[RMDB]
RNA sequence: GGGAACGACUCGAGUAGAGUCGAAAACUGGAUCGACCAGCCGCGACGCACCGCCCCGGAUGGCUCGAAUUUCCAACUCCAGCACUGGACCCACCACUUCGACUACGCGCUUGUCUGCGGCGGCGGCAUCGUUACAGCCAUUCGUGGCUGUAACGAUAAAAGAAACAACAACAACAAC
Reactivity to 2A3 in 0.01 (KOAc 150mM, MgCl2 10mM, bicine 150mM(pH8.5), 24C), signal-to-noise 1, nucleotides 027 to 126: c000u010g070g020a010u080c040g010a050c030c010a070g000c020c010g000c010g010a040c060g000c040a060c080c010g000c010c000c000c000g070g020a040u040g000g060c050u040c030g040a070a100u000u110u090c030c010a030a060c010u050c030c010a030g000c060a070c080u070g070g000a070c000c000c000a020c040c060a070c050u080u020c020g070a040c020u060a030c070g060c000g030c090u070u140g060u050c060u110g000c000g020g000c070g000g000c000g010g010c000
Reactivity to DMS in 0.01 (KOAc 150mM, MgCl2 10mM, bicine 150mM(pH8.5), 24C), signal-to-noise 2, nucleotides 027 to 126: c090u000g000g030a090u000c080g000a100c050c020a140g020c050c010g000c140g000a090c120g010c120a110c100c100g020c030c010c060c030g000g010a090u000g000g000c100u010c020g010a100a070u000u000u000c030c070a070a150c070u000c030c020a010g000c090a080c080u030g020g000a100c060c020c020a120c010c090a030c090u000u000c020g000a040c070u010a110c120g050c080g000c050u000u000g000u010c060u000g050c080g000g030c010g010g000c020g000g020c070
The record gives the reactivity of an RNA of 177 nucleotides to 2A3 and DMS. Reactivities are rounded to 0.1 and cut off at 0 and 3. For 2A3 the reverse transcriptase was SuperScript II with manganese. The data come from the RNA Mapping Database (RMDB), library OK2TST. The reactions ran in a buffer of 150 mM KOAc, 10 mM MgCl2 and 150 mM bicine (pH 8.5), at 24 C. High DMS reactivity at an A or C suggests that its Watson-Crick edge is free.